[RMDB]
An RNA of 207 nucleotides, treated with 2A3 and read out base by base.
RNA sequence: GGGAACGACUCGAGUAGAGUCGAAAAGCGUACUACUUAGGGAAAGUGCGCUGACAUGGAGGGAGGACUCCCAAAUAGGAGUCCAUCGAUCUCCAUGGUGGAGCAUAACACUAAGUAUCGCAAAACGUCAGCGACAUGUUCGCAUGUCGCUGACGAACUAAGUGGCCAUGUUCGCAUGGCCACUUAGAAAAGAAACAACAACAACAAC
Reactivity to 2A3 in 0.01 (KOAc 150mM, MgCl2 10mM, bicine 150mM(pH8.5), 24C), signal-to-noise 1, nucleotides 027 to 156: g020c010g050u060a090c030u010a000c000u010u000a000g010g020g080a100a190a250g090u000g010c060g020c070u050g000a000c000a010u010g020g020a010g000g010g000a020g010g000a000c000u040c000c020c050a180a300a020u230a170g000g010a000g000u030c000c000a030u160c000g010a000u020c000u000c020c000a000u000g010g010u010g010g010a020g000c000a030u080a180a050c040a000c090u000a000a000g000u000a030u300c030g000c020a000a000a000a100c000g000u000c000a000g000c000g010a000c000a000u010g000u070u210c300g020c120a000u010g000u000c000g000c000u000g000a000c000g000a000a000
It was measured as part of the RMDB library RNAMAK.